[RMDB]
RNA sequence: GGGAACGACUCGAGUAGAGUCGAAAAAAAAACGCUGGGUAGACUGACAGCGAGGGUGGUGGAGGACUGAAGCGCGCACGGUCCGAUGAAACCACCUACCCACCGCUGGAGGUCUACCUGUGCUGAAGCGCGCACGGCAACCGAAAGGUGCGAAAAAGUACUGUUUAUACUUCGGUAUAAACAGUACAAAAGAAACAACAACAACAAC
Reactivity to 2A3 in 0.01 (KOAc 150mM, MgCl2 10mM, bicine 150mM(pH8.5), 24C), signal-to-noise 1, nucleotides 027 to 156: a030a020a000a000a000c020g010c000u000g000g000g010u000a000g010a000c010u010g030a040c020a010g020c030g020a120g020g000g020u010g000g040u010g000g050a030g000g000a000c000u000g040a230a020g020c000g000c000g000c000a000c000g000g000u020c010c000g060a200u040g010a010a010a010c000c000a000c000c000u010a020c020c000c020a110c080c080g000c000u010g010g000a020g040g020u000c000u000a000c000c000u000g000u000g000c010u030g010a140a040g000c000g000c010g000c000a010c010g030g030c020a020a010c000c000g030a040a060a010g040g000u010g000c000g070a100a050a000a010a020
Annotation:
The record gives the reactivity of an RNA of 207 nucleotides to 2A3. The data come from the RNA Mapping Database (RMDB), library RNAMAK. Reactivities are rounded to 0.1 and cut off at 0 and 3.